[RMDB]
RNA sequence: GGGAACGACUCGAGUAGAGUCGAAAAAAGAAGGCCCAAAUUUGCCUGCAAAAAGUCACAUACCUAGGGUACUCUUUAGAGGAUGGUCAAAGAUGGCUUACCAAAGCUCGGAAAGAAGCCAUUCUCUAGUUUUGUGGAGAUUCGUCUCCACAAAACUAAAAGAAACAACAACAACAAC
Reactivity to DMS in 0.01 (KOAc 150mM, MgCl2 10mM, bicine 150mM(pH8.5), 24C), signal-to-noise 1, nucleotides 027 to 126: a030a030g000a160a030g000g000c020c010c000a160a020a180u040u020u000g000c020c010u000g000c000a000a010a060a060a070g030u020c060a060c100a080u000a040c060c060u020a120g010g000g000u000a100c020u000c000u040u000u010a010g000a040g020g000a000u000g000g010u010c030a210a000a030g010a300u120g010g000c040u030u000a220c210c130a060a030a000g000c080u090c000g020g000a030a200a080g010a150a070g020c000c030a000u000u000c000u000c000u000
Reactivity to 2A3 in 0.01 (KOAc 150mM, MgCl2 10mM, bicine 150mM(pH8.5), 24C), signal-to-noise 1, nucleotides 027 to 126: a010a030g140a020a020g030g050c000c010c000a040a000a040u040u020u070g020c010c000u020g000c000a030a020a030a070a070g100u140c110a010c000a100u120a080c000c020u070a040g000g010g030u130a090c000u000c000u040u070u050a070g000a000g000g000a010u000g040g000u220c060a000a160a000g060a010u100g090g000c000u020u020a190c000c010a000a150a000g010c040u060c130g060g050a040a040a040g160a000a030g010c000c000a000u000u000c000u000c010u000
An RNA of 177 nucleotides, treated with DMS and 2A3 and read out base by base. Reactivities are rounded to 0.1 and cut off at 0 and 3. For 2A3 the reverse transcriptase was SuperScript II with manganese. Conditions: 150 mM KOAc, 10 mM MgCl2 and 150 mM bicine (pH 8.5), 24 C.